The record gives the reactivity of an RNA of 177 nucleotides to 2A3 and DMS. Conditions: 150 mM KOAc, 10 mM MgCl2 and 150 mM bicine (pH 8.5), 24 C. Values are in units of 0.01, from 0 to 300, in steps of 10. Values cover nucleotides 27 to 126.
[RMDB]
RNA sequence: GGGAACGACUCGAGUAGAGUCGAAAAUUGAGAAAAAAAUAUGCUCUUACUCGUAAUCAGGUAAUGCAACUGAUACAGCUUGGAAAGAAAAUUGAGAAGUAUUAUCAAAUGCCUAUGGAUGUAGAGUGCACUAGUAAUGGUUCGCCAUUACUAGUGCAAAAGAAACAACAACAACAAC
Reactivity to 2A3 in 0.01 (KOAc 150mM, MgCl2 10mM, bicine 150mM(pH8.5), 24C), signal-to-noise 5, nucleotides 027 to 126: u070u090g030a060g110a050a030a000a000a000a080a050u300a080u210g020c030u020c010u080u090a040c010u000c030g110u180a020a060u050c030a000g010g000u060a070a030u080g040c040a100a050c040u000g010a010u000a030c000a000g020c030u050u070g070g060a040a120a050g150a050a140a180a190u190u140g010a030g010a080a020g020u020a020u060u010a040u300c030a040a010a060u040g000c010c020u100a110u170g130g000a020u050g000u100a010g010a010g090u040
Reactivity to DMS in 0.01 (KOAc 150mM, MgCl2 10mM, bicine 150mM(pH8.5), 24C), signal-to-noise 1, nucleotides 027 to 126: u000u000g000a080g000a000a010a030a060a210a140a120u020a010u000g000c000u000c030u040u000a110c010u000c010g020u000a300a080u030c040a080g030g010u030a020a070u000g000c080a060a060c130u000g000a030u000a000c060a250g000c020u000u000g000g000a120a030a000g000a170a000a080a050u000u000g000a300g030a070a000g000u000a000u000u000a020u000c030a010a050a280u000g000c000c070u000a080u020g000g000a110u030g000u020a170g020a030g000u000